[RMDB]
RNA sequence: GGGAACGACUCGAGUAGAGUCGAAAAGAUAUGGAUACGGCGAAGUCACGCGAAGAACUCUAUGCUCCCCACCGCUUCGGAAACGAAGCGAGGCAUAGAGGGAGCGUGUCACGCCGUAUCCUAAGUCCAUACGGUAAAAGUUCGCUUUUACCGUAUGAAAAGAAACAACAACAACAAC
Reactivity to 2A3 in 0.01 (KOAc 150mM, MgCl2 10mM, bicine 150mM(pH8.5), 24C), signal-to-noise 9, nucleotides 027 to 126: g030a050u180a070u280g010g000a000u000a000c000g010g020c010g060a300a040g090u040c000a000c010g020c020g170a300a070g010a050a020c000u000c010u010a010u010g010c000u160c030c030c000c010a020c010c010g010c000u000u010c000g010g030a090a080a050c010g000a000a000g010c000g000a010g000g000c000a000u010a010g010a000g000g000g000a010g000c010g000u010g010u010c010a010c010g000c000c000g000u000a000u000c000c000u000a010a000g020u000c020
Reactivity to DMS in 0.01 (KOAc 150mM, MgCl2 10mM, bicine 150mM(pH8.5), 24C), signal-to-noise 9, nucleotides 027 to 126: g010a100u010a300u000g000g010a020u000a010c010g010g010c010g010a180a160g020u000c010a010c010g020c000g010a130a190g000a130a210c010u000c000u000a010u000g000c010u000c140c030c010c050a300c110c000g000c000u000u000c000g000g000a140a100a260c010g010a020a000g010c010g000a020g010g000c000a010u000a000g000a010g000g000g000a050g010c000g020u000g000u010c030a220c010g010c000c000g010u000a000u000c000c000u000a010a050g000u010c070
This 177-nucleotide RNA was probed chemically with 2A3 and DMS. 2A3 adducts were read by reverse transcription with SuperScript II with manganese. The RNA was probed in 150 mM KOAc, 10 mM MgCl2 and 150 mM bicine (pH 8.5) at 24 C. Source: RMDB library TTRINS, as collected in RNAgym.